An RNA of 170 nucleotides, treated with DMS and 2A3 and read out base by base.
For 2A3 the reverse transcriptase was SuperScript II with manganese.
It was measured as part of the RMDB library 15KLIB.
DMS adducts were read by reverse transcription with MarathonRT.
[RMDB]
RNA sequence: GGGAACGACUCGAGUAGAGUCGAAAAUCGUCCCCACAUAGCAGUUUCCAGGACCCCCUUCCAAAAAGACUGAGGGGGGUGGCUAGGACGCAGGGGACCAGUGGAGCCGUGGGAUGCUCUUCCCAAUGACGCAGCCACUUCGGUGGCUGCAAAAGAAACAACAACAACAAC
Reactivity to DMS in 0.01 (KOAc 150mM, MgCl2 10mM, bicine 150mM(pH8.5), 24C), signal-to-noise 4, nucleotides 027 to 129: u060c120g040u040c030c000c000c000a130c230a130u020a110g030c000a100g050u000u000u000c010c040a080g020g000a070c040c020c000c000c010u020u020c010c150a090a070a080a170a050g020a300c260u040g020a050g050g000g090g000g000g040u000g000g010c000u020a070g020g010a040c060g000c090a100g010g010g020g050a000c000c130a070g070u040g010g000a040g040c100c090g100u070g090g060g000a110u090g010c060u010c000u000u100c040c060c040a140a070u080g020a110c220
Reactivity to 2A3 in 0.01 (KOAc 150mM, MgCl2 10mM, bicine 150mM(pH8.5), 24C), signal-to-noise 3, nucleotides 027 to 129: u040c040g020u000c000c010c010c000a060c010a040u100a000g000c060a030g060u090u040u000c010c010a000g000g010a000c000c000c030c000c000u000u000c050c040a070a060a000a060a060g190a110c190u070g010a020g000g020g010g000g010g000u000g000g040c000u030a100g010g020a000c020g000c020a040g030g000g000g000a010c000c040a010g090u100g070g010a000g000c010c060g070u200g000g140g000a040u110g000c020u010c000u060u040c010c000c000a000a050u060g010a040c100